[RMDB]
RNA sequence: GGGAACGACUCGAGUAGAGUCGAAAACAAAGGAGAGCUACAUGGAGAAAUCUUUACGAGAAUUUUAAUACCGUUCCAAGAGUGGACAAGGGAAGUUGUUUCGACUCGGGAGGUUUCUCUCUAUGACGAGGGACACUUCAUCUCUUCGAACAAAGAACCACAAUUCAGAUUUCGAUCUGAAUUGUGGAAAAGAAACAACAACAACAAC
Reactivity to 2A3 in 0.01 (KOAc 150mM, MgCl2 10mM, bicine 150mM(pH8.5), 24C), signal-to-noise 2, nucleotides 027 to 156: c020a010a090a040g020g010a020g000a010g010c080u150a130c120a100u130g020g020a040g000a070a110a100u060c060u080u130u100a160c000g000a010g040a110a060u190u170u030u060a090a040u060a040c010c020g070u050u010c040c020a060a040g130a060g130u230g030g020a020c030a180a170g060g040g010a120a030g010u000u020g000u000u020u080c110g020a020c020u000c020g000g000g030a010g080g000u030u050u010c010u020c000u010c020u040a100u190g090a020c070g010a010g010g060g000a040c050a020c070u180u150c040a050u050c030u000c000u100u060c030g020a040a030c140a140a120a050g200a040a020
An RNA of 207 nucleotides, treated with 2A3 and read out base by base. Source: RMDB library OK3TST, as collected in RNAgym. The RNA was probed in 150 mM KOAc, 10 mM MgCl2 and 150 mM bicine (pH 8.5) at 24 C.